The record gives the reactivity of an RNA of 177 nucleotides to 2A3 and DMS. For 2A3, 1,933 sequencing reads were counted. The RNA was probed in 150 mM KOAc, 10 mM MgCl2 and 150 mM bicine (pH 8.5) at 24 C. As a SHAPE reagent, 2A3 marks flexible, mostly unpaired nucleotides at the ribose 2'-OH. DMS adducts were read by reverse transcription with MarathonRT. For DMS, 3,681 sequencing reads were counted. For 2A3 the reverse transcriptase was SuperScript II with manganese.
RNA sequence: GGGAACGACUCGAGUAGAGUCGAAAACUCGUGAAGCGCCGUGGUAUGACAAGAUCUGGGAAGUAAAAGAUUGGCUAUUACAGCGUGCCACAGAUGGCAAUUGGGGCAAGUCGAUCACCUGGGGUUCUCAACUGCUAGCAUUCGUGCUAGCAGUUGAAAAAGAAACAACAACAACAAC
Reactivity to 2A3 in 0.01 (KOAc 150mM, MgCl2 10mM, bicine 150mM(pH8.5), 24C), signal-to-noise 3, nucleotides 027 to 126: c040u030c010g050u090g040a140a040g000c000g000c080c000g010u050g050g020u100a100u130g050a050c070a120a050g010a150u040c030u060g170g000g020a070a020g070u190a010a060a120a060g080a070u080u080g030g010c010u040a060u100u100a040c020a020g020c010g110u080g020c010c000a020c040a060g120a130u090g030g010c030a060a050u090u120g020g000g000g020c040a070a030g010u030c010g010a030u030c010a020c090c010u030g050g000g000g000u100u000c040
Reactivity to DMS in 0.01 (KOAc 150mM, MgCl2 10mM, bicine 150mM(pH8.5), 24C), signal-to-noise 2, nucleotides 027 to 126: c040u000c050g020u030g050a050a130g010c030g010c060c020g000u020g000g090u020a010u010g030a100c090a030a060g010a070u010c060u010g000g010g010a060a050g010u040a070a090a080a100g000a040u030u000g010g000c010u030a030u000u010a050c170a060g000c060g010u000g000c100c010a080c150a140g000a170u020g030g000c020a070a080u010u000g000g030g000g000c050a080a070g000u010c000g000a010u010c050a050c040c010u000g000g000g010g000u000u040c060